[RMDB]
RNA sequence: GGGAACGACUCGAGUAGAGUCGAAAAUCGACGUGCUAGAGUGCGUACACAUCCAUGCUAGGCGCGCUAGAUGUCUAGUGAUGAUCGUCUAGUGACAUAUCCAUGGAUCUCUAGGGAUCGUACGUACAGCACGAGCAUACUUCGGUAUGCUCGUGCUAAAAGAAACAACAACAACAAC
Reactivity to DMS in 0.01 (KOAc 150mM, MgCl2 10mM, bicine 150mM(pH8.5), 24C), signal-to-noise 2, nucleotides 027 to 126: u020c010g010a140c100g010u000g010c070u000a120g000a160g000u000g000c020g000u000a010c020a120c220a080u000c150c030a020u010g030c120u000a020g010g000c150g020c010g020c020u000a010g020a140u010g000u010c010u000a120g020u020g010a140u010g020a050u010c080g030u000c010u000a000g000u000g000a160c050a060u000a030u000c220c010a080u010g000g000a040u010c030u010c040u030a110g030g000g010a060u010c090g010u000a040c030g000u000a030c070
Reactivity to 2A3 in 0.01 (KOAc 150mM, MgCl2 10mM, bicine 150mM(pH8.5), 24C), signal-to-noise 2, nucleotides 027 to 126: u060c030g040a020c020g030u050g050c020u050a040g000a050g150u070g040c040g090u090a030c080a010c000a050u010c010c000a010u040g020c030u050a050g020g050c030g010c020g000c100u000a010g040a140u090g060u010c010u020a090g040u050g210a170u120g020a060u160c050g000u010c030u010a020g000u040g060a030c020a080u170a060u060c060c000a020u000g020g020a100u030c020u000c030u100a100g010g040g070a050u100c080g000u020a110c010g010u020a020c020

Structure probing data (DMS and 2A3) for a 177-nucleotide construct. The RNA was probed in 150 mM KOAc, 10 mM MgCl2 and 150 mM bicine (pH 8.5) at 24 C. DMS adducts were read by reverse transcription with MarathonRT. Values cover nucleotides 27 to 126. As a SHAPE reagent, 2A3 marks flexible, mostly unpaired nucleotides at the ribose 2'-OH.